[RMDB]
RNA sequence: GGGAACGACUCGAGUAGAGUCGAAAAGACGGAACGUUGUAUCAUUUCGUUGCUCAAUCAAUGACACAAACGGUCUGAGUGACACUACAGAAGAAAUGUAGUUUGGGAAACCUAUCGUCGAAAGAAAGGGUUUACAUAUGUUCGCAUAUGUAAACCCAAAAGAAACAACAACAACAAC
Reactivity to 2A3 in 0.01 (KOAc 150mM, MgCl2 10mM, bicine 150mM(pH8.5), 24C), signal-to-noise 5, nucleotides 027 to 126: g010a010c020g010g000a090a010c010g000u000u020g160u100a070u070c050a070u030u150u200c060g010u010u010g030c000u000c010a040a070u090c030a090a140u200g050a050c050a030c020a230a290a040c150g020g000u000c070u020g000a000g000u040g010a010c010a010c030u060a000c010a030g130a200a030g080a050a250a020u040g010u050a010g010u040u090u030g040g000g060a040a020a000c000c000u050a060u110c030g030u020c020g050a030a090a020g150a020a070a050
Reactivity to DMS in 0.01 (KOAc 150mM, MgCl2 10mM, bicine 150mM(pH8.5), 24C), signal-to-noise 3, nucleotides 027 to 126: g010a040c020g000g040a060a080c170g000u000u000g000u000a140u000c000a060u010u000u010c040g000u000u000g000c020u030c060a070a050u040c050a110a120u030g010a080c150a010c160a030a080a130c280g010g030u000c040u000g010a060g010u000g030a020c030a050c060u010a040c100a050g040a120a160g020a090a040a050u000g000u000a000g010u000u080u020g010g010g000a070a020a040c010c030u010a140u030c020g020u000c000g000a100a100a080g000a030a110a110
Source: RMDB library OK1LIB, as collected in RNAgym.
The record gives the reactivity of an RNA of 177 nucleotides to 2A3 and DMS.
For DMS the reverse transcriptase was MarathonRT.
2A3 adducts were read by reverse transcription with SuperScript II with manganese.
Conditions: 150 mM KOAc, 10 mM MgCl2 and 150 mM bicine (pH 8.5), 24 C.